[RMDB]
RNA sequence: GGGAACGACUCGAGUAGAGUCGAAAAUUUUGACGAGUGUCAUUGAAAUUACAAAAUUGAUUUCGUCGAAAACUUCAAUUUUUUGUCAAUUUUCACCGACAACAGCACGCAUUUCGUUGAAAUUACAUUAACAUUAUGUUUGUAACUGCGCAAUAGAGACUAGAACUAGUUUCGACUAGUUCUAGUCAAAAGAAACAACAACAACAAC
Reactivity to 2A3 in 0.01 (KOAc 150mM, MgCl2 10mM, bicine 150mM(pH8.5), 24C), signal-to-noise 4, nucleotides 027 to 156: u010u010u000u030g000a000c000g010a020g050u040g010u030c030a030u050u080g020a030a020a040u060u040a030c020a020a030a010a010u000u020g010a010u030u050u030c100g090u040c070g160a040a030a040a050c030u050u050c030a010a060u000u040u060u050u100u120g010u060c050a030a040u040u020u070u070c030a060c040c050g090a050c050a200a020c030a060g080c080a010c080g040c010a040u140u210u050c010g000u020u020g010a030a050a020u040u060a030c040a050u090u110a140a020c010a070u140u220a140u280g030u050u050u040g010u020a030a040c070u060g010c080g000c090a030a030u090a100g110a000
Reactivity to DMS in 0.01 (KOAc 150mM, MgCl2 10mM, bicine 150mM(pH8.5), 24C), signal-to-noise 2, nucleotides 027 to 156: u000u000u000u000g010a020c020g010a090g030u000g020u010c040a100u000u000g010a060a030a040u000u010a080c040a040a050a060a040u000u000g010a070u000u000u010c040g030u010c180g000a150a080a070a040c040u000u000c020a010a010u000u000u000u000u000u000g010u000c080a040a050u000u000u000u000c100a060c100c000g010a110c050a070a080c080a080g030c080a100c060g010c040a060u000u000u000c000g020u000u000g000a050a040a050u010u000a050c070a100u000u000a090a080c030a150u020u000a140u010g030u020u000u010g000u000a080a090c090u000g020c010g020c060a070a130u000a130g040a300
An RNA of 207 nucleotides, treated with 2A3 and DMS and read out base by base. It was measured as part of the RMDB library OK3TST. Values cover nucleotides 27 to 156. For 2A3 the reverse transcriptase was SuperScript II with manganese. The reactions ran in a buffer of 150 mM KOAc, 10 mM MgCl2 and 150 mM bicine (pH 8.5), at 24 C.